[RMDB]
RNA sequence: GGGAACGACUCGAGUAGAGUCGAAAAGAGCUUUUGUCCGGAAUGGUUCCGCCGUGAUCGGGCCAUGCAAUAGUUGCCAACGACUACUAUGCUCCGGUUGCUCAGGCAGCGUAACGCUGCUUGAAAGAUGACGGCAAUCGCUUCGGCGAUUGCCGAAGCAUGAACUAAUGUUCGCAUUAGUUCAUGCAAAAGAAACAACAACAACAAC
Reactivity to 2A3 in 0.01 (KOAc 150mM, MgCl2 10mM, bicine 150mM(pH8.5), 24C), signal-to-noise 4, nucleotides 027 to 156: g030a010g020c030u110u190u220u220g080u090c000c020g010g040a060a050u070g010g010u290u300c010c030g020c030c060g180u210g070a300u080c020g000g000g000c000c010a020u060g000c010a100a210u010a030g000u020u060g060c080c040a140a070c140g060a030c010u040a010c010u030a010u070g030c000u010c010c010g000g000u050u100g010c010u020c000a010g000g000c000a010g000c020g090u180a110a060c280g000c000u010g000c000u000u010g030a010a000a010g090a060u160g080a020c010g000g010c000a000a000u020c000g000c000u020u030c210g110g000c000g010a010u000u010g000c010c000g000a010a000
Reactivity to DMS in 0.01 (KOAc 150mM, MgCl2 10mM, bicine 150mM(pH8.5), 24C), signal-to-noise 2, nucleotides 027 to 156: g010a060g010c060u010u000u010u010g020u000c030c020g000g000a140a050u000g010g010u000u000c020c020g010c120c070g060u030g000a070u000c020g010g030g010c020c020a030u010g000c070a070a110u000a060g020u000u000g030c080c090a170a200c210g000a060c020u000a060c040u000a100u000g020c010u000c030c020g000g000u010u000g030c030u000c000a000g000g000c000a030g050c000g000u000a110a170c140g040c000u000g000c000u010u010g000a070a090a150g000a110u000g000a180c030g010g000c010a010a030u000c000g010c000u000u010c300g030g050c000g020a020u000u000g030c000c010g030a010a070